[RMDB]
RNA sequence: GGGAACGACUCGAGUAGAGUCGAAAAGAUGGAGAGGAUCGUGACAGCAUCGGAGACUCUGGGAAUGAUGAUGAUGAUGACUCAGAAGCUGGAGUUCUAGAUGAGUCGUCCACAACAACGUCAACGAAGUGCUAAUAGUGUUCGCACUAUUAGCACUAAAAGAAACAACAACAACAAC
Reactivity to DMS in 0.01 (KOAc 150mM, MgCl2 10mM, bicine 150mM(pH8.5), 24C), signal-to-noise 9, nucleotides 027 to 126: g010a090u000g010g010a120g000a070g010g010a070u000c080g010u000g010a070c060a080g000c060a080u000c050g010g010a160g010a070c040u010c020u000g010g000g010a080a080u010g010a190u010g010a080u010g020a130u000g000a080u000g010a140c110u000c010a050g000a130a090g010c050u000g000g010a110g010u000u000c030u000a060g010a120u000g010a030g010u000c010g010u000c010c050a050c060a030a060c080a050a070c080g000u000c120a070a100c210g010a090
Reactivity to 2A3 in 0.01 (KOAc 150mM, MgCl2 10mM, bicine 150mM(pH8.5), 24C), signal-to-noise 5, nucleotides 027 to 126: g060a030u090g020g020a060g010a040g090g010a050u080c090g050u080g040a020c010a040g050c010a030u020c020g050g040a060g010a030c010u020c030u080g040g010g040a130a110u080g040a040u020g010a010u020g010a010u070g010a060u080g020a040c010u000c030a030g030a120a010g050c040u070g030g060a060g030u080u020c030u050a100g000a100u050g000a020g010u000c010g000u000c010c010a030c000a030a020c010a020a010c030g080u070c020a050a040c060g090a090